Record summary: Chemical mapping of a 207-nucleotide RNA with 2A3. It was measured as part of the RMDB library VIROID.

[RMDB]
RNA sequence: GGGAACGACUCGAGUAGAGUCGAAAACUUCUUUAGCACCGGGCUAGGGAGUAAGCCCGUGGAACCUUAGUUUUGUUCCCUCGGGACUUACUUGUGGUUCCUGUGGUGCACUCCUGACCCUGCUGCUAUACAAGAAAAAGAAAUGAGGCGAAGAAGUGUGAAUUAUGGAGUUCGCUCCAUAAUUCACAAAAGAAACAACAACAACAAC
Reactivity to 2A3 in 0.01 (KOAc 150mM, MgCl2 10mM, bicine 150mM(pH8.5), 24C), signal-to-noise 2, nucleotides 027 to 156: c000u040u030c000u020u100u010a010g000c000a000c050c040g060g000g000c010u040a070g040g000g000a020g020u060a070a020g000c000c000c000g010u040g000g000a000a000c000c000u030u030a010g010u060u130u070u280g080u120u110c010c000c010u070c100g070g000g000a010c000u000u010a000c000u030u070g100u150g070g000u010u040c000c020u000g150u300g020g000u090g020c070a010c010u010c000c000u040g000a060c000c000c000u020g030c080u000g000c010u030a010u060a120c080a030a030g060a060a080a030a010a000g100a010a100a040u160g020a070g070g070c110g080a060a020g010a130a080g160u040
2A3 adducts were read by reverse transcription with SuperScript II with manganese.